[RMDB]
RNA sequence: GGGAACGACUCGAGUAGAGUCGAAAAGGAUUGGGAUAUAGAGUAUCCUUAUAUCUCACAUGAAAAGAAAUUGAAUUCCUGUUGUAGAAUCGUUGAGCGCAACGUCGUACGUGCUGCUCUUCUUGCCCGAAGAGGCUUAGUUCGCUAAGCCUCUUCGAAAAGAAACAACAACAACAAC
Reactivity to DMS in 0.01 (KOAc 150mM, MgCl2 10mM, bicine 150mM(pH8.5), 24C), signal-to-noise 2, nucleotides 027 to 126: g000g000a130u010u000g000g000g000a010u010a020u010a050g000a200g030u000a090u000c110c040u000u000a020u000a010u000c010u000c050a080c160a080u010g010a040a060a060a120g000a050a080a120u010u010g000a100a230u000u000c000c020u000g050u010u000g020u010a060g010a100a080u000c110g000u020u000g000a040g040c050g000c020a050a020c030g000u000c280g010u000a240c060g040u000g000c030u000g000c010u000c010u000u010c010u000u000g000c100c130